RNA sequence: GGGAACGACUCGAGUAGAGUCGAAAAUGUUCGUAGCGAUGAUGCUUUUCAUCUGACGCGACGUGAAGACCAAACGCAGUUAAGAACCGUAGAUGACACGAAUUUAAAAAGCGCAGGCCCCGAGGGACAUCAACCUAUAGUUCGCUAUAGGUUGAUGAAAAGAAACAACAACAACAAC
Reactivity to DMS in 0.01 (KOAc 150mM, MgCl2 10mM, bicine 150mM(pH8.5), 24C), signal-to-noise 5, nucleotides 027 to 126: u010g010u010u000c000g030u000a050g020c300g000a060u000g010a030u010g020c270u000u000u000u000c000a020u010c010u000g010a220c040g000c030g010a020c040g010u010g010a130a070g010a170c020c020a060a080a170c100g000c070a060g010u000u000a090a100g020a090a080c060c040g030u000a080g020a090u000g000a110c110a040c060g000a070a100u000u000u020a050a050a070a080a040g010c050g010c100a080g020g010c030c010c040c030g000a060g000g010g020a260
Reactivity to 2A3 in 0.01 (KOAc 150mM, MgCl2 10mM, bicine 150mM(pH8.5), 24C), signal-to-noise 3, nucleotides 027 to 126: u050g020u080u020c010g010u030a000g050c030g030a030u000g010a020u080g150c160u280u100u050u000c010a010u000c010u030g060a020c040g000c010g000a010c010g000u050g050a060a020g030a040c000c000a010a020a010c060g000c020a070g010u060u060a150a020g050a060a030c040c000g040u030a040g010a190u120g010a020c020a000c090g030a020a020u070u100u160a140a120a030a020a000g030c030g010c040a020g000g090c010c030c000c040g010a020g020g020g010a000
Notes
The record gives the reactivity of an RNA of 177 nucleotides to DMS and 2A3. For 2A3 the reverse transcriptase was SuperScript II with manganese. For DMS, 3,898 sequencing reads were counted. The 2A3 profile rests on 2,866 reads. For DMS the reverse transcriptase was MarathonRT. The reactions ran in a buffer of 150 mM KOAc, 10 mM MgCl2 and 150 mM bicine (pH 8.5), at 24 C. The data come from the RNA Mapping Database (RMDB), library RFMREP.